The record gives the reactivity of an RNA of 207 nucleotides to DMS and 2A3.
The 2A3 profile rests on 1,338 reads.
The RNA was probed in 150 mM KOAc, 10 mM MgCl2 and 150 mM bicine (pH 8.5) at 24 C.
For DMS, 1,109 sequencing reads were counted.
2A3 adducts were read by reverse transcription with SuperScript II with manganese.
Values are in units of 0.01, from 0 to 300, in steps of 10.
Values cover nucleotides 27 to 156.
RNA sequence: GGGAACGACUCGAGUAGAGUCGAAAAGCACGUUCGCGUGCGACUGGGCGUACUACGAGGGAGUACGACGAUCAUAUGAAGAAGCUAUCCCAAAUAGGAUAGUGUAAAGUAUGGGAGUACGACGAUCUCGUAUCGCAAGGAGGCCGUUCGCGGCCAACCUUUUAACAGCCUUCGGGCUGUUAAAAGGAAAAGAAACAACAACAACAAC
Reactivity to DMS in 0.01 (KOAc 150mM, MgCl2 10mM, bicine 150mM(pH8.5), 24C), signal-to-noise 1, nucleotides 027 to 156: g040c010a010c000g000u000u000c300g040c000g130u000g020c010g020a070c000u020g000g070g000c010g000u000a050c150u020a020c000g000a050g000g010g000a300g070u000a010c080g000a030c000g000a300u020c000a070u000a050u020g000a050a130g070a150a300g000c000u000a000u000c000c040c000a070a200a130u010a000g000g000a020u000a000g000u000g020u000a140a190a300g000u000a000u000g020g030g000a300g030u000a030c020g030a030c000g020a300u000c000u040c000g000u000a000u020c040g000c000a020a080g020g000a160g000g010c000c000g000u000u000c300g070c020g070g000c000c000a020a060
Reactivity to 2A3 in 0.01 (KOAc 150mM, MgCl2 10mM, bicine 150mM(pH8.5), 24C), signal-to-noise 2, nucleotides 027 to 156: g000c010a000c000g020u110u150c270g030c000g060u030g010c000g010a020c030u160g070g140g030c040g020u130a070c060u000a010c080g000a000g050g020g000a010g020u020a010c050g000a000c000g000a010u060c000a000u010a000u050g010a040a250g010a020a000g010c020u000a000u000c020c050c050a140a290a050u210a060g000g010a000u000a000g060u110g000u060a000a000a000g020u000a000u000g000g010g000a060g010u000a010c000g010a000c000g030a010u030c010u000c000g000u000a000u010c000g000c010a010a050g060g060a070g010g000c000c010g020u100u130c300g000c000g060g060c000c000a000a020